Chemical mapping of a 177-nucleotide RNA with DMS and 2A3.

[RMDB]
RNA sequence: GGGAACGACUCGAGUAGAGUCGAAAAACAUUGACGCUGUCACUGGUGUGGGAAUGUGGGUAGUUGGAUGGGCUGAUGAAGGCGAUCACCAAGUUUAUCCUUCUGGUUUCGAACGUGUCGCUUGCUCGCUGGAUACGUUUUUCGAAACGUAUCCAGCAAAAGAAACAACAACAACAAC
Reactivity to DMS in 0.01 (KOAc 150mM, MgCl2 10mM, bicine 150mM(pH8.5), 24C), signal-to-noise 2, nucleotides 027 to 126: a060c100a080u000u000g010a080c090g010c040u000g000u000c050a060c110u010g020g020u020g010u010g000g010g000a060a060u000g020u020g010g000g010u010a070g030u010u000g010g000a070u010g000g020g010c070u000g020a090u010g020a030a080g010g010c050g020a070u020c050a050c030c040a030a050g010u000u000u010a070u000c020c050u010u000c110u000g030g030u000u000u000c010g000a080a050c170g000u010g020u000c010g000c080u000u000g000c110u000c130
Reactivity to 2A3 in 0.01 (KOAc 150mM, MgCl2 10mM, bicine 150mM(pH8.5), 24C), signal-to-noise 1, nucleotides 027 to 126: a000c030a030u040u080g030a010c070g070c260u110g060u070c010a000c150u080g030g070u160g020u190g150g010g110a060a130u120g000u090g020g020g000u010a050g060u080u110g000g050a030u050g000g060g000c070u030g060a110u090g040a020a030g070g000c040g000a070u120c010a010c000c000a040a050g070u080u030u030a060u030c000c000u080u090c160u090g000g000u050u060u030c020g020a070a050c000g020u020g000u020c010g020c070u040u080g000c020u050c100